[RMDB]
RNA sequence: GGGAACGACUCGAGUAGAGUCGAAAAGCCUAAGCGUUCGCGCUUAGGCAAAGAAAGGGAAAACGCAACGCCAACGGAAAGGCGAAUUCCGAACAACCAUAAAAAGUUGCCUCUUCGGAGGCAACAAGUUUAUACCCUUGUUCGCAAGGGUAUAAACAAAAGAAACAACAACAACAAC
Reactivity to 2A3 in 0.01 (KOAc 150mM, MgCl2 10mM, bicine 150mM(pH8.5), 24C), signal-to-noise 2, nucleotides 027 to 126: g040c000c000u000a000a000g000c000g010u000u080c190g020c000g000c120u000u010a000g000g000c000a000a000a010g010a020a050a000g080g030g020a060a060a020a020c050g010c060a000a060c040g040c050c000a100a040c130g120g020a130a040a030g060g000c010g050a070a070u030u000c010c000g010a060a010c030a020a030c020c030a030u180a110a090a010a010a010g010u010u000g010c000c000u000c000u040u090c180g050g010a020g000g000c000a000a000c010a000a000
Reactivity to DMS in 0.01 (KOAc 150mM, MgCl2 10mM, bicine 150mM(pH8.5), 24C), signal-to-noise 3, nucleotides 027 to 126: g010c010c000u000a000a000g020c010g040u000u010c210g040c010g030c000u000u000a000g000g020c000a000a020a020g000a040a080a100g000g000g000a030a030a060a180c060g010c020a160a080c150g020c050c060a110a120c130g000g010a050a040a080g000g010c010g000a060a150u000u010c010c010g010a120a050c090a050a140c040c060a130u020a050a070a090a100a060g000u000u000g000c000c000u000c000u010u020c180g010g000a020g000g000c000a000a000c000a030a020